[RMDB]
Chemical mapping of a 177-nucleotide RNA with DMS and 2A3.
Conditions: 150 mM KOAc, 10 mM MgCl2 and 150 mM bicine (pH 8.5), 24 C.
For DMS, 8,837 sequencing reads were counted.
DMS adducts were read by reverse transcription with MarathonRT.
DMS (dimethyl sulfate) methylates the pairing face of unpaired adenines and cytosines.

RNA sequence: GGGAACGACUCGAGUAGAGUCGAAAAGCGAUCAAUAAUAAGUCGACUACUCGAAAGAGUCACAUGGAAACAUGCCUACUAAUGCGUCCAAUGUAGGUCGACGAUUAGGACGCAGAAGAUCGCGAAACCCUAUAUCACGGUUCGCCGUGAUAUAGGGAAAAGAAACAACAACAACAAC
Reactivity to DMS in 0.01 (KOAc 150mM, MgCl2 10mM, bicine 150mM(pH8.5), 24C), signal-to-noise 5, nucleotides 027 to 126: g020c000g010a000u000c010a240a050u050a050a050u030a100a130g030u000c000g000a040c040u000a030c000u020c010g010a080a100a130g000a010g000u010c160a200c000a010u010g000g000a140a040a180c010a000u000g000c300c050u000a030c060u020a130a090u030g010c010g020u000c000c010a090a030u070g010u010a020g000g000u000c000g030a040c010g000a120u020u000a110g010g010a020c000g040c000a080g020a120a090g000a010u000c000g000c000g000a100a090a130
Reactivity to 2A3 in 0.01 (KOAc 150mM, MgCl2 10mM, bicine 150mM(pH8.5), 24C), signal-to-noise 5, nucleotides 027 to 126: g010c010g010a000u010c040a020a020u130a220a010u120a140a010g010u000c000g000a010c010u070a010c000u010c010g040a050a050a050g020a010g020u050c010a000c000a020u020g000g040a040a020a030c020a010u030g020c010c010u040a050c020u050a070a060u100g000c000g000u000c000c010a070a070u250g020u040a040g000g040u020c010g000a010c000g010a000u030u070a040g000g000a000c000g000c000a000g000a000a030g000a000u010c010g000c000g040a050a000a010